Structure probing data (2A3 and DMS) for a 177-nucleotide construct. The DMS profile rests on 1,977 reads. The 2A3 profile rests on 3,998 reads. The data come from the RNA Mapping Database (RMDB), library TTRDEL.
[RMDB]
RNA sequence: GGGAACGACUCGAGUAGAGUCGAAAAGAUAUGGAGUUUGGGAGAGCGAUGUUCGAAGAACUCGGAAACGAGGGAGAACUAAGCUCGAAGAACAAACUCCUAAGUCAAAGAGGGCUUCGGCCCUCAAGUUCUAUACAGGGUUCGCCCUGUAUAGAACAAAAGAAACAACAACAACAAC
Reactivity to 2A3 in 0.01 (KOAc 150mM, MgCl2 10mM, bicine 150mM(pH8.5), 24C), signal-to-noise 2, nucleotides 027 to 126: g040a000u050a040u170g010g000a010g020u000u000u020g010g000g020a060g000a010g020c010g020a040u150g010u010u000c050g090a300a030g030a100a050c010u000c000g010g020a090a100a000c000g000a010g010g010g010a070g000a000a000c010u010a010a060g000c060u000c000g010a020a000g000a010a010c000a010a000a000c000u000c010c000u020a130a010g020u020c000a020a130a110g000a020g010g040g000c020u110u110c300g190g000c030c060c000u000c000a000a000
Reactivity to DMS in 0.01 (KOAc 150mM, MgCl2 10mM, bicine 150mM(pH8.5), 24C), signal-to-noise 3, nucleotides 027 to 126: g010a070u000a300u000g010g000a010g000u000u000u000g030g000g000a130g000a000g020c010g000a170u010g020u000u000c000g030a100a150g000a090a180c000u000c000g000g000a140a100a200c010g000a030g000g000g000a110g010a010a010c010u000a170a300g000c000u000c000g000a020a090g040a110a200c000a040a010a020c000u000c000c000u000a010a070g000u000c040a050a120a140g000a020g000g000g020c000u010u030c250g000g000c000c000c010u000c000a010a090